[RMDB]
RNA sequence: GGGAACGACUCGAGUAGAGUCGAAAAGGGAAUGGUGGUUUACCCCGUUAUCAAAUGAUUACUGACCAAUAAUUGGCGAAACUCGUUUCGCGUUGGCUGCCUAAUUCAAGGAAUUAGCGUGCCUUCAAAGACAUCAAGAAGUUCGCUUCUUGAUGAACACUCAUGGGAAGUUCGCUUCCCAUGAGUGAAAAGAAACAACAACAACAAC
Reactivity to DMS in 0.01 (KOAc 150mM, MgCl2 10mM, bicine 150mM(pH8.5), 24C), signal-to-noise 1, nucleotides 027 to 156: g000g000g010a020a040u010g000g020u000g010g010u000u000u010a080c030c000c000c050g040u000u000a120u000c080a080a120a120u000g000a130u010u010a120c040u000g000a120c020c030a110a140u000a070a170u020u020g040g010c000g020a090a100a040c120u070c090g020u000u000u000c010g050c080g000u000u000g010g020c030u040g000c080c000u010a000a050u000u000c010a140a180g050g010a050a010u000u000a000g010c010g020u000g010c040c000u000u000c060a040a070a160g000a150c020a010u010c000a000a030g000a020a060g020u000u020c300g000c010u000u000c000u000u000g000a030u000g020a060a130
Reactivity to 2A3 in 0.01 (KOAc 150mM, MgCl2 10mM, bicine 150mM(pH8.5), 24C), signal-to-noise 3, nucleotides 027 to 156: g070g000g030a060a040u190g030g000u060g050g000u070u120u200a120c000c000c000c010g030u060u040a090u110c060a080a130a220u150g020a000u050u050a080c000u070g120a070c020c050a030a020u170a110a110u130u090g060g000c030g000a020a030a030c070u060c090g070u000u040u020c040g020c020g020u010u030g010g010c030u040g010c020c030u000a000a010u000u010c110a200a100g160g020a040a030u010u020a020g000c030g070u030g000c010c000u000u000c050a060a030a030g060a030c000a000u000c000a010a000g000a000a000g000u040u170c180g010c080u020u000c000u000u000g000a000u000g000a010a000